[RMDB]
RNA sequence: GGGAACGACUCGAGUAGAGUCGAAAAUACGAGUCGACAAAACGCGAGAUGCGUAUUUGGAUGAGGACACCAGCCUUAAUUGGCAGACACGGGAAGUGUUGGUGCUUGACCAACCUGAUGUGAACAGCCUAGCUAUCUAGUUCGCUAGAUAGCUAGGAAAAGAAACAACAACAACAAC
Reactivity to 2A3 in 0.01 (KOAc 150mM, MgCl2 10mM, bicine 150mM(pH8.5), 24C), signal-to-noise 5, nucleotides 027 to 126: u190a020c050g010a000g050u020c010g030a060c030a010a080a020a010c030g030c010g020a110g050a200u260g070c010g020u030a230u010u050u020g050g020a070u060g060a040g010g050a020c010a020c020c010a000g040c000c000u070u070a110a120u230u050g020g020c000a000g030a010c020a020c010g090g000g160a150a090g030u040g000u080u020g010g010u020g000c140u060u100g090a030c000c000a000a030c020c020u070g060a110u090g040u020g060a070a010c000a020g030
Reactivity to DMS in 0.01 (KOAc 150mM, MgCl2 10mM, bicine 150mM(pH8.5), 24C), signal-to-noise 4, nucleotides 027 to 126: u010a100c100g010a140g000u000c010g020a150c070a060a070a130a050c120g000c020g000a160g010a100u010g000c010g020u000a060u000u000u010g000g000a100u000g000a080g000g000a120c020a020c010c010a130g030c020c010u000u000a080a110u010u000g010g010c010a180g010a060c030a030c030g000g020g020a130a090g010u010g000u000u000g010g030u000g010c070u000u000g010a100c020c020a030a070c030c030u000g000a110u010g020u020g010a050a100c190a060g010